Chemical mapping of a 177-nucleotide RNA with 2A3. 2A3 adducts were read by reverse transcription with SuperScript II with manganese. Source: RMDB library RFM100, as collected in RNAgym.
RNA sequence: GGGAACGACUCGAGUAGAGUCGAAAAACAUAGGCCAUGCUUACGAGCAUGGCCUAUGACGAAUCUCAAGCAAUCAAGCAUUCUACUUCUAUUGCAACACUGAGGAGCUUACGAGCUCCUCAGUGAAGAGACUGGCUACAUUCGUGUAGCCAGUCUCAAAAGAAACAACAACAACAAC
Reactivity to 2A3 in 0.01 (KOAc 150mM, MgCl2 10mM, bicine 150mM(pH8.5), 24C), signal-to-noise 1, nucleotides 027 to 126: a000c010a000u000a010g000g010c000c000a030u010g000c010u160u010a080c190g160a000g000c020a000u020g010g000c010c000u000a000u000g000a000c000g060a030a140u060c010u000c000a010a070g000c020a040a080u020c010a000a070g030c040a090u180u180c040u130a030c150u090u220c050u140a020u010u040g030c070a090a000c000a090c020u000g000a020g040g010a000g000c000u010u070a100c300g000a020g000c020u000c000c000u000c000a020g000u000g000a040a000